This 177-nucleotide RNA was probed chemically with 2A3 and DMS. 2A3 adducts were read by reverse transcription with SuperScript II with manganese. Conditions: 150 mM KOAc, 10 mM MgCl2 and 150 mM bicine (pH 8.5), 24 C.
RNA sequence: GGGAACGACUCGAGUAGAGUCGAAAAGCCGUUCAUUCAAGGAAAUCCCAGAAUGGCAUGAAUUUACGAUUGACGAUGCAUCAUUUUAUGCAGAUGGUGACGAUUAUGAUGAGUACUUUGGUGAUGAUCACUCUCUUAGAUUCGUCUAAGAGAGUGAAAAAGAAACAACAACAACAAC
Reactivity to 2A3 in 0.01 (KOAc 150mM, MgCl2 10mM, bicine 150mM(pH8.5), 24C), signal-to-noise 8, nucleotides 027 to 126: g010c020c010g000u010u020c020a090u110u100c060a040a050g070g020a150a130a110u020c010c000c000a010g040a000a020u040g010g000c040a040u120g140a100a120u070u120u140a080c080g050a080u010u100g090a040c030g030a040u100g030c000a010u020c010a020u040u060u060u130a180u240g070c080a030g040a100u050g010g050u030g040a040c030g030a030u040u070a070u210g100a010u030g010a010g030u060a110c060u060u100u110g130g020u120g040a120u090g020a010
Reactivity to DMS in 0.01 (KOAc 150mM, MgCl2 10mM, bicine 150mM(pH8.5), 24C), signal-to-noise 9, nucleotides 027 to 126: g020c010c010g020u000u000c030a150u010u010c190a130a140g000g010a080a120a130u010c010c000c000a140g010a040a030u010g010g020c020a110u000g000a070a050u000u010u000a050c070g010a110u000u000g000a060c100g010a100u000g010c010a020u010c050a040u000u000u000u020a080u020g020c140a060g010a050u000g010g010u000g000a060c050g000a070u000u010a060u010g000a070u000g000a170g010u000a040c100u000u000u000g010g020u000g010a080u000g010a200